[RMDB]
RNA sequence: GGGAACGACUCGAGUAGAGUCGAAAACAUGUUGACGGGUCUGCAGUCCAGCUUUAUUAUGUCCUUAAGUCUUACACUAGCAUCUCCACUGGAAAGCAUCAAUCUGCAGAGCUUCACACAUGCACUCGCUCGAGGGGAUCUUCGGAUCCCCUCGAGCAAAAGAAACAACAACAACAAC
Reactivity to 2A3 in 0.01 (KOAc 150mM, MgCl2 10mM, bicine 150mM(pH8.5), 24C), signal-to-noise 1, nucleotides 027 to 126: c040a000u000g000u000u000g040a060c060g010g090g230u020c130u000g020c000a000g000u000c000c020a000g030c000u050u110u000a090u150u230a090u300g090u260c010c000u020u150a170a000g020u000c020u120u070a000c080a000c060u130a040g000c030a020u010c000u000c240c010a000c020u000g020g030a020a000a110g000c000a120u150c070a040a050u000c000u000g000c000a000g000a000g030c000u060u060c000a060c010a000c000a020u030g000c010a020c030u000c070